RNA sequence: GGGAACGACUCGAGUAGAGUCGAAAAGGUGUUACUGCCGCAGCCCGUGAACUCAGCCUGUAUGAAUCACAACUCUACAACUGGCGCAGUAAACAGCAAAAUCAGCAGACGUCUUCUGAACGUGAACUCUAAUUGUUCAAUUCGUUGAACAAUUAGAAAAAGAAACAACAACAACAAC
Reactivity to 2A3 in 0.01 (KOAc 150mM, MgCl2 10mM, bicine 150mM(pH8.5), 24C), signal-to-noise 6, nucleotides 027 to 126: g020g020u050g020u100u050a040c030u050g030c020c040g030c020a020g030c000c020c030g000u050g070a040a040c030u030c070a020g030c000c040u090g020u080a080u200g060a050a030u110c040a030c020a140a100c040u020c010u110a050c020a130a060c060u060g040g000c040g000c030a000g010u050a020a120a040c030a000g070c030a030a030a010a200u100c030a030g040c000a010g050a120c020g050u010c000u130u000c020u110g040a060a010c030g060u050g080a040a030c010
Reactivity to DMS in 0.01 (KOAc 150mM, MgCl2 10mM, bicine 150mM(pH8.5), 24C), signal-to-noise 8, nucleotides 027 to 126: g010g020u000g010u000u000a060c050u000g010c040c060g020c070a110g020c030c030c040g010u000g010a060a090c090u000c050a070g020c070c070u000g010u010a030u020g010a070a090u010c120a080c200a090a130c130u000c040u000a050c060a060a100c060u010g000g010c070g010c050a030g010u000a040a040a070c060a070g010c090a050a060a080a070u000c060a050g010c060a070g010a070c080g000u000c040u010u010c060u000g000a070a050c090g010u000g000a090a090c170
Structure probing data (2A3 and DMS) for a 177-nucleotide construct. The 2A3 profile rests on 11,311 reads. As a SHAPE reagent, 2A3 marks flexible, mostly unpaired nucleotides at the ribose 2'-OH.